Chemical mapping of a 177-nucleotide RNA with 2A3.

RNA sequence: GGGAACGACUCGAGUAGAGUCGAAAAAAUUUAGCCACCUUCGAUAUCGUGCGAACCGGCUUCUACCUCAUUGAAGGCAGAUAAUGUAUUCCACAAUGACAAGUGAACCGACAUGUUUAGCCAAGCCCCCAAGCGUUUUGUUCGCAAAACGCUUGGGAAAAGAAACAACAACAACAAC
Reactivity to 2A3 in 0.01 (KOAc 150mM, MgCl2 10mM, bicine 150mM(pH8.5), 24C), signal-to-noise 1, nucleotides 027 to 126: a020a020u140u140u070a030g040c000c010a010c070c020u130u000c030g030a040u040a050u140c030g010u100g040c000g000a020a000c000c040g000g090c000u000u000c030u000a090c000c020u000c000a070u000u180g040a210a050g000g000c030a000g050a000u140a080a040u130g050u090a030u020u020c000c000a000c040a140a010u070g110a000c040a100a090g020u030g080a010a050c000c000g050a000c010a030u120g070u080u080u050a030g000c000c000a110a000g000c100c000
Reactivities are given for positions 27 through 126.